[RMDB]
RNA sequence: GGGAACGACUCGAGUAGAGUCGAAAAGAGAUGUUGAGGCUUGUAUGGUUCAGGUUACCUGCGGUAGCAUGACUCUUAAUGGUCUUUGGCUUGACAACACAGUCUGGUGCCCACGACACGUAAUGUGCAGUCAAUUGUGGUUCGCCACAAUUGACUGAAAAGAAACAACAACAACAAC
Reactivity to DMS in 0.01 (KOAc 150mM, MgCl2 10mM, bicine 150mM(pH8.5), 24C), signal-to-noise 1, nucleotides 027 to 126: g000a090g010a070u000g040u000u000g000a060g000g010c020u030u000g010u030a060u030g000g020u010u000c040a010g000g010u000u000a030c090c010u000g030c120g000g030u000a080g000c000a040u000g000a070c010u000c060u000u020a040a140u010g000g000u000c040u000u000u000g040g030c060u000u010g010a100c050a070a080c110a100c090a100g000u010c020u000g020g010u010g000c040c010c050a100c110g000a170c010a030c070g020u040a090a070u000g010u000g000
Reactivity to 2A3 in 0.01 (KOAc 150mM, MgCl2 10mM, bicine 150mM(pH8.5), 24C), signal-to-noise 1, nucleotides 027 to 126: g030a000g040a030u150g010u140u050g060a000g000g010c030u040u070g030u200a110u200g050g000u120u000c000a030g000g010u070u000a060c030c080u080g050c090g120g030u010a010g000c040a010u010g010a020c000u060c000u040u050a080a060u160g000g000u040c000u020u080u080g020g000c050u080u080g000a000c010a140a000c040a020c010a020g050u130c030u010g020g000u000g000c000c000c030a030c000g040a050c000a000c010g050u130a150a140u260g020u000g070
Source information: This 177-nucleotide RNA was probed chemically with DMS and 2A3. DMS adducts were read by reverse transcription with MarathonRT. The DMS profile rests on 1,186 reads. Source: RMDB library 15KREP, as collected in RNAgym. For 2A3, 747 sequencing reads were counted.